Background: The record gives the reactivity of an RNA of 170 nucleotides to 2A3 and DMS. The reactions ran in a buffer of 150 mM KOAc, 10 mM MgCl2 and 150 mM bicine (pH 8.5), at 24 C. The data come from the RNA Mapping Database (RMDB), library 15KLIB. For DMS, 15,184 sequencing reads were counted. For DMS the reverse transcriptase was MarathonRT.

[RMDB]
RNA sequence: GGGAACGACUCGAGUAGAGUCGAAAAUGAAUGGGCUCUUGCCAACCAAUUCACUGAAUUUGUUGGCACUCAAUCCGUUGACAUGUUAGCUGUCAAAACAGGCGUUGCUAUUGAACAGCUGCUUUAUAUACUCGUCUCUUCGGAGACGAGAAAAGAAACAACAACAACAAC
Reactivity to 2A3 in 0.01 (KOAc 150mM, MgCl2 10mM, bicine 150mM(pH8.5), 24C), signal-to-noise 4, nucleotides 027 to 129: u170g050a000a000u030g000g000g000c040u010c060u160u080g000c000c000a000a000c010c070a000a000u020u000c180a250c300u300g000a010a000u000u020u010g000u010u000g000g000c000a010c010u020c020a010a040u000c000c010g000u010u060g100a030c030a130u080g020u100u100a000g010c020u000g000u000c000a010a010a030a080c100a070g070g060c210g260u220u170g040c010u070a070u080u090g020a070a020c010a010g000c000u010g020c000u020u130u000a080u010a020u000a060
Reactivity to DMS in 0.01 (KOAc 150mM, MgCl2 10mM, bicine 150mM(pH8.5), 24C), signal-to-noise 5, nucleotides 027 to 129: u030g000a050a030u050g020g020g040c120u000c160u070u060g020c020c010a040a020c010c070a100a000u010u020c040a260c300u180g000a000a000u060u000u000g020u030u000g020g030c000a060c140u020c150a080a140u010c020c030g030u000u020g030a090c130a050u040g050u020u030a050g010c000u040g000u010c040a030a030a020a130c120a090g020g050c080g060u120u000g000c000u040a100u040u030g010a100a030c030a020g030c000u020g020c060u000u000u000a000u000a090u050a090